Conditions: 150 mM KOAc, 10 mM MgCl2 and 150 mM bicine (pH 8.5), 24 C. Chemical mapping of a 207-nucleotide RNA with 2A3.
[RMDB]
RNA sequence: GGGAACGACUCGAGUAGAGUCGAAAAUACGGGCCAAGCGUGCCGCCCAGGGCAUACGACAGCUCGUCGCCGCCGUCGCCGGCAGGGUCCACGAACAUCGUCAUCUGCUGGAGUGGUGCCCAGCCUCCAGCCAUCAGCGCCGGCAGGUACAGCUCGGUACCACCUUGAAGUUCGCUUCAAGGUGGUAAAAAGAAACAACAACAACAAC
Reactivity to 2A3 in 0.01 (KOAc 150mM, MgCl2 10mM, bicine 150mM(pH8.5), 24C), signal-to-noise 1, nucleotides 027 to 156: u080a010c000g000g000g060c050c010a070a010g110c090g000u030g000c000c000g030c030c130c010a050g000g000g000c050a090u170a090c040g060a070c100a020g000c010u010c050g040u000c020g000c030c010g000c040c020g050u090c030g000c020c010g030g070c050a110g060g040g000u000c020c040a000c040g130a160a040c100a060u120c030g160u040c020a180u120c300u160g000c000u040g040g000a060g010u110g020g020u130g050c000c000c000a040g080c040c000u110c000c000a050g020c000c000a110u160c050a110g080c000g000c090c000g020g000c000a020g000g000u040a050c000a090g040c040u000c100g040g000